[RMDB]
RNA sequence: GGGAACGACUCGAGUAGAGUCGAAAACCUAGUUGUCAAAAGUUCGUACAGGUGACUUGUAAAUGUUUUGCGACCUUCUAAUAUGAUACUGGCAAAACAUUUACACGUACCUUGUAUGAACUUUUGAAUCCGAGUAAUCGUUCGCGAUUACUCGGAUAAAAGAAACAACAACAACAAC
Reactivity to 2A3 in 0.01 (KOAc 150mM, MgCl2 10mM, bicine 150mM(pH8.5), 24C), signal-to-noise 3, nucleotides 027 to 126: c000c000u010a050g060u030u100g030u010c000a010a010a000a000g010u000u000c000g000u000a000c000a010g000g060u080g210a060c000u030u030g000u010a000a000a000u010g000u000u000u000u000g010c030g190a230c060c020u070u180c040u070a300a300u200a180u300g030a020u030a140c070u000g110g000c000a000a010a000a000c000a000u000u000u000a010c000a000c000g040u030a090c000c000u030u100g010u000a000u000g000a000a000c000u000u000u000u000g000a000
Reactivity to DMS in 0.01 (KOAc 150mM, MgCl2 10mM, bicine 150mM(pH8.5), 24C), signal-to-noise 1, nucleotides 027 to 126: c000c000u010a060g000u020u040g000u000c000a010a000a010a000g020u000u000c000g010u000a010c000a010g000g020u000g010a010c020u030u000g000u010a020a020a000u000g010u000u000u000u000g020c000g010a120c300c180u020u000c010u000a110a210u020a070u050g000a010u010a050c290u000g010g000c000a000a000a000a000c000a000u000u000u010a000c000a000c050g000u020a000c020c000u020u010g020u010a010u000g000a010a000c000u000u000u000u020g010a200